[RMDB]
RNA sequence: GGGAACGACUCGAGUAGAGUCGAAAAACAUAUCGACGUUACGACGUCGAUAUGAAAUAUAUGAUGACUUUCAUAGAAUCUCGUUCGGCUGAUGAUUGCUGUUGAGACUUGGAAAUCUGAUUUUUAAGCCAGAAAAACCGUUCGCGGUUUUUCUGGCAAAAGAAACAACAACAACAAC
Reactivity to 2A3 in 0.01 (KOAc 150mM, MgCl2 10mM, bicine 150mM(pH8.5), 24C), signal-to-noise 1, nucleotides 027 to 126: a030c000a000u000a000u000c000g000a010c000g000u000u120a080c130g000a000c000g080u000c000g000a000u000a000u000g000a000a000a000u280a000u030a000u000g060a000u020g000a000c000u000u000u000c050a060u070a170g000a050a140u000c000u000c010g250u190u060c020g000g000c000u080g120a290u090g030a100u140u300g150c050u000g000u110u180g000a000g030a000c010u000u030g000g030a000a000a000u000c000u000g130a080u000u000u000u040u260a070a070